[RMDB]
RNA sequence: GGGAACGACUCGAGUAGAGUCGAAAACGUUCAUCAUCAUGCAGGCGAUCUUUGAUGCUGUGUGUGGCGGCAUCCUGCUGUACCUUGCCUUUGUUCUCAUGCUGAGCGACUUUCCAACGGACCUGCAGUCCACUGAGGUAUUCGUACCUCAGUGGACAAAAGAAACAACAACAACAAC
Reactivity to 2A3 in 0.01 (KOAc 150mM, MgCl2 10mM, bicine 150mM(pH8.5), 24C), signal-to-noise 3, nucleotides 027 to 126: c010g020u040u000c020a090u010c010a010u010c000a010u120g040c030a010g060g010c050g080a090u050c110u080u130u230g030a020u050g000c030u020g060u020g020u000g040u070g200g000c020g000g020c000a040u050c000c010u090g010c030u030g040u080a100c020c010u030u060g010c010c000u130u100u130g060u140u000c040u000c020a050u090g040c020u050g030a010g020c000g020a060c030u040u070u010c020c000a110a030c030g080g010a020c000c010u100g000c040a030
Reactivity to DMS in 0.01 (KOAc 150mM, MgCl2 10mM, bicine 150mM(pH8.5), 24C), signal-to-noise 2, nucleotides 027 to 126: c080g030u000u010c060a050u010c020a050u010c110a130u000g020c050a040g000g010c060g010a060u000c070u000u010u000g000a070u010g020c010u000g020u000g000u030g030u000g000g000c050g020g010c020a030u000c020c110u000g000c060u000g000u000a070c100c040u000u020g030c030c060u010u000u020g010u000u000c030u000c040a050u010g010c070u000g000a100g000c040g000a070c050u000u000u000c030c010a070a180c160g000g020a060c020c020u000g020c120a120